[RMDB]
RNA sequence: GGGAACGACUCGAGUAGAGUCGAAAACAGGCUUCAUGGAGGCGAGUGGGCCGGGUGCAAAGCGGCUGCAGGCGCUGUGCGACCGACUGGAGCGGCUCACCGACGAGCAGGCGCGGCAGCUACUGGGCUUAAAGCCUCAAUUCGUUGAGGCUUUAAGAAAAGAAACAACAACAACAAC
Reactivity to DMS in 0.01 (KOAc 150mM, MgCl2 10mM, bicine 150mM(pH8.5), 24C), signal-to-noise 6, nucleotides 027 to 126: c100a100g020g010c030u000u000c060a080u010g020g000a110g010g000c040g010a100g010u010g010g000g010c030c050g020g000g000u000g020c080a050a060a060g010c040g010g020c020u000g010c030a060g010g020c030g010c020u000g010u000g000c030g010a110c050c020g000a120c100u010g000g000a160g000c030g010g000c050u000c040a070c060c070g010a070c080g000a130g000c030a180g000g000c030g020c030g000g010c020a040g010c020u000a040c030u000g010g000g030
Reactivity to 2A3 in 0.01 (KOAc 150mM, MgCl2 10mM, bicine 150mM(pH8.5), 24C), signal-to-noise 3, nucleotides 027 to 126: c030a020g080g000c020u030u040c060a090u170g110g020a020g070g050c080g020a040g060u090g000g000g030c010c050g040g070g000u070g030c050a050a040a060g060c050g040g000c000u010g010c010a050g210g000c030g000c010u070g050u100g090c020g040a130c040c020g060a050c110u200g060g000a090g090c020g030g000c020u020c020a090c020c040g100a100c060g000a030g020c020a010g000g000c020g000c010g020g000c020a010g010c000u010a050c030u050g040g040g000
Structure probing data (DMS and 2A3) for a 177-nucleotide construct. The RNA was probed in 150 mM KOAc, 10 mM MgCl2 and 150 mM bicine (pH 8.5) at 24 C. DMS adducts were read by reverse transcription with MarathonRT. For 2A3, 3,781 sequencing reads were counted. The DMS profile rests on 10,784 reads.